Structure probing data (2A3 and DMS) for a 177-nucleotide construct.
RNA sequence: GGGAACGACUCGAGUAGAGUCGAAAAUUGGCGAAGUUCUCGGCGUCUUCCUGGGUGAAGAACGUAUUGCCGGUGAAGGUCAGUUCGCCGCUGUCGAGCCAAGCGGUAGCGAACUUUUCGCUGGAUGGCCAAGAUACUAGUUCGCUAGUAUCUUGGCAAAAGAAACAACAACAACAAC
Reactivity to 2A3 in 0.01 (KOAc 150mM, MgCl2 10mM, bicine 150mM(pH8.5), 24C), signal-to-noise 6, nucleotides 027 to 126: u120u100g040g000c060g030a050a020g060u040u020c030u010c010g060g000c040g010u020c010u020u010c010c020u160g200g000g120u290g040a060a060g020a060a040c050g050u110a150u110u300g050c010c000g010g000u040g010a050a050g060g060u170c100a020g010u010u010c010g000c000c000g000c000u030g070u110c040g070a050g030c030c030a060a010g000c010g080g020u070a040g060c020g020a000a010c000u050u050u010u030c000g010c010u010g040g040a090u090g130
Reactivity to DMS in 0.01 (KOAc 150mM, MgCl2 10mM, bicine 150mM(pH8.5), 24C), signal-to-noise 2, nucleotides 027 to 126: u030u000g010g000c020g030a040a080g010u000u010c010u000c020g030g020c040g010u000c000u000u000c000c010u030g030g000g050u030g010a020a010g010a120a070c040g020u000a080u030u030g030c030c000g020g000u000g000a030a000g000g010u000c210a100g010u000u000c040g020c010c000g010c000u000g000u020c040g010a120g000c100c080a100a150g020c010g000g000u010a090g040c010g020a100a090c070u000u020u000u000c010g020c000u000g010g000a120u020g010

The reactions ran in a buffer of 150 mM KOAc, 10 mM MgCl2 and 150 mM bicine (pH 8.5), at 24 C. DMS (dimethyl sulfate) methylates the pairing face of unpaired adenines and cytosines.